[RMDB]
RNA sequence: GGGAACGACUCGAGUAGAGUCGAAAAUCACGGAUUGAAGGCUGACGUAGUGAGGUCAAAUUCUUCACUUCCAGAAUGACUUCACCCGGCUUGUUGAGGCGAUCAGGAAAACGCUGACUCAGUGAGCGACUUGCGGUGAGUUCGCUCACCGCAAGUCAAAAGAAACAACAACAACAAC
Reactivity to DMS in 0.01 (KOAc 150mM, MgCl2 10mM, bicine 150mM(pH8.5), 24C), signal-to-noise 1, nucleotides 027 to 126: u000c050a190c030g000g010a040u000u000g000a080a060g000g000c020u000g010a210c150g020u000a030g030u000g000a040g010g030u000c070a120a070a210u010u000c010u000u010c080a050c080u000u000c160c030a030g010a090a050u000g000a020c000u000u010c010a060c010c000c000g060g000c050u000u000g000u040u000g010a100g030g010c050g000a120u020c050a070g000g010a050a030a090a070c100g010c050u000g010a070c030u000c050a040g010u000g000a040g000c090
Reactivity to 2A3 in 0.01 (KOAc 150mM, MgCl2 10mM, bicine 150mM(pH8.5), 24C), signal-to-noise 1, nucleotides 027 to 126: u080c020a030c020g030g020a090u080u060g000a010a000g040g000c030u010g000a060c060g090u070a010g010u060g040a030g040g000u030c170a200a060a150u210u010c000u030u020c020a010c040u100u000c010c010a010g100a060a090u120g020a030c000u000u000c000a020c000c000c010g020g000c000u010u000g000u040u030g000a030g020g060c090g070a120u020c050a040g080g170a000a140a100a100c090g000c050u000g040a030c020u010c000a030g000u000g040a010g020c040